[RMDB]
RNA sequence: GGGAACGACUCGAGUAGAGUCGAAAAGAUAUGGAAACCGAACAGUGCUGCACGAAGAACAACAAUGUCGUUCGGAAACGAACGACAUUGUUGGGAGUGCAGACCCACUUCCCGGUUUCCUAAGUCAGCUGUUAUAACAGUUCGCUGUUAUAACAGCAAAAGAAACAACAACAACAAC
Reactivity to 2A3 in 0.01 (KOAc 150mM, MgCl2 10mM, bicine 150mM(pH8.5), 24C), signal-to-noise 1, nucleotides 027 to 126: g050a010u080a060u140g020g000a000a000a010c010c000g000a070a060c080a110g010u020g030c020u010g010c010a020c050g200a300a110g020a180a020c010a020a000c000a020a000u000g000u000c010g000u000u020c010g030g000a100a060a020c020g020a000a000c000g060a010c020a000u000u010g000u010u000g000g020g020a020g000u000g010c010a000g000a010c020c000c020a040c000u030u030c110c120c000g050g020u000u000u080c000c010u020a170a040g080u050c040a050
Reactivity to DMS in 0.01 (KOAc 150mM, MgCl2 10mM, bicine 150mM(pH8.5), 24C), signal-to-noise 2, nucleotides 027 to 126: g040a070u020a300u020g000g000a020a020a010c000c000g020a070a120c300a050g000u000g000c010u000g010c000a010c030g000a110a160g010a160a190c010a000a000c010a000a000u000g000u000c010g000u000u000c000g040g000a110a140a200c010g040a010a000c000g000a020c010a000u000u000g000u000u010g000g000g000a110g000u010g000c000a000g010a100c200c300c060a030c010u020u000c170c200c020g020g020u010u000u000c000c010u000a020a070g000u010c070a110
Background: This 177-nucleotide RNA was probed chemically with 2A3 and DMS. The reactions ran in a buffer of 150 mM KOAc, 10 mM MgCl2 and 150 mM bicine (pH 8.5), at 24 C. The DMS profile rests on 1,976 reads.